[RMDB]
Notes: The record gives the reactivity of an RNA of 207 nucleotides to 2A3. 2A3 adducts were read by reverse transcription with SuperScript II with manganese.

RNA sequence: GGGAACGACUCGAGUAGAGUCGAAAAAUCAUCUGAAGAUCAGCUAUUAGAAGAGAAAGAUCAGUUAAGUCCUUUGGACCUGAUCAACUUGAUACAAGAACUACUGAUUUCAACUUCUUUGGCUUAAAAAAGGCCACAGAGUUCGCUCUGUGGCCAACAUGCGUAGCUUGUUCGCAAGCUACGCAUGAAAAGAAACAACAACAACAAC
Reactivity to 2A3 in 0.01 (KOAc 150mM, MgCl2 10mM, bicine 150mM(pH8.5), 24C), signal-to-noise 1, nucleotides 027 to 156: a010u070c020a020u020c030u210g070a180a010g030a190u100c040a010g000c000u060a060u210u030a240g010a040a030g000a020g030a060a040a030g000a010u000c000a020g000u020u120a080a000g000u010c000c010u080u160u220g020g020a010c010c030u050g030a090u020c050a010a050c020u030u060g010a000u070a130c030a010a010g060a120a010c090u150a020c010u050g000a040u000u000u040c020a070a050c010u030u010c000u000u010u010g000g000c000u020u030a030a000a000a010a030a080g020g000c010c000a000c000a000g040a020g020u040u100c110g060c090u040c000u010g010u020g000g000c000c000a000a000

The reactions ran in a buffer of 150 mM KOAc, 10 mM MgCl2 and 150 mM bicine (pH 8.5), at 24 C. Reactivities are rounded to 0.1 and cut off at 0 and 3. It was measured as part of the RMDB library M2RFPK.